[RMDB]
An RNA of 177 nucleotides, treated with 2A3 and DMS and read out base by base. Conditions: 150 mM KOAc, 10 mM MgCl2 and 150 mM bicine (pH 8.5), 24 C. The data come from the RNA Mapping Database (RMDB), libraries RFM100 and RFMREP. Reactivities are given for positions 27 through 126.
RNA sequence: GGGAACGACUCGAGUAGAGUCGAAAAGAAACUAUUCUGGGGUUUGGAAGGGGAAUCCCCUUUCCCGGUUUAAGGAGGGUGCUCAGGAUGCAAAUAAAUGUUUCAAGGCAUCCGUCGAAGGGAACAAGUUCCUACGGUAUUUCGAUACCGUAGGAACAAAAGAAACAACAACAACAAC
Reactivity to 2A3 in 0.01 (KOAc 150mM, MgCl2 10mM, bicine 150mM(pH8.5), 24C), signal-to-noise 3, nucleotides 027 to 126: g060a010a050a010c060u090a090u130u090c020u030g100g010g000g000u090u260u110g060g010a040a020g010g020g000g070a040a070u270c020c010c000c000u000u020u010c000c000c010g070g020u090u100u140a050a020g040g040a040g000g000g000u100g020c020u040c040a010g000g100a010u000g020c040a030a110a120u120a060a180a080u110g100u010u080u060c010a000a000g040g010c000a000u030c010c000g000u010c030g020a010a030g040g000g010a010a080c060a070a080
Reactivity to DMS in 0.01 (KOAc 150mM, MgCl2 10mM, bicine 150mM(pH8.5), 24C), signal-to-noise 3, nucleotides 027 to 126: g000a070a100a090c240u010a070u010u000c040u000g020g000g030g000u000u030u030g000g020a100a030g000g010g000g020a190a110u060c080c000c010c000u000u000u010c000c030c110g000g000u030u030u010a090a050g020g010a080g010g000g000u000g010c210u000c110a110g030g000a030u010g000c000a060a080a060u040a080a030a110u030g000u010u020u020c060a140a130g020g000c020a000u010c000c020g020u020c130g010a160a090g010g020g010a070a070c140a050a090